Notes:
An RNA of 207 nucleotides, treated with 2A3 and read out base by base. The reactions ran in a buffer of 150 mM KOAc, 10 mM MgCl2 and 150 mM bicine (pH 8.5), at 24 C. For 2A3, 1,094 sequencing reads were counted. Reactivities are given for positions 27 through 156.
[RMDB]
RNA sequence: GGGAACGACUCGAGUAGAGUCGAAAAAGUGAGUAUGGCUCGUUACGACGAGCCAUACUCACAACGGUUUUCCUAAAUCGUCGUGAGACGGACCUUGGAAAACCUAGUAUUUAACUAACUAGGUCAAAAAACGGGUGGAGCUUCGGCUCCACCCGAACCAACUAUAGUUGUUCGCAACUAUAGUUGGAAAAGAAACAACAACAACAAC
Reactivity to 2A3 in 0.01 (KOAc 150mM, MgCl2 10mM, bicine 150mM(pH8.5), 24C), signal-to-noise 1, nucleotides 027 to 156: a010g020u000g000a010g000u010a000u010g010g000c020u010c030g030u060u070a140c280g020a010c000g000a120g000c010c000a000u000a000c000u000c000a000c000a000a000c000g000g010u000u000u000u010c000c000u000a010a000a000u040c000g000u000c010g010u040g120a130g000a020c010g010g010a000c000c000u030u010g000g010a000a000a000a000c000c010u010a010g000u010a070u040u160u050a060a050c030u000a020a000c010u010a010g030g010u000c050a060a080a090a110a000a000c020g000g000g000u010g000g020a000g000c000u070u090c300g150g000c000u030c010c030a000c000c000c010g000a000a000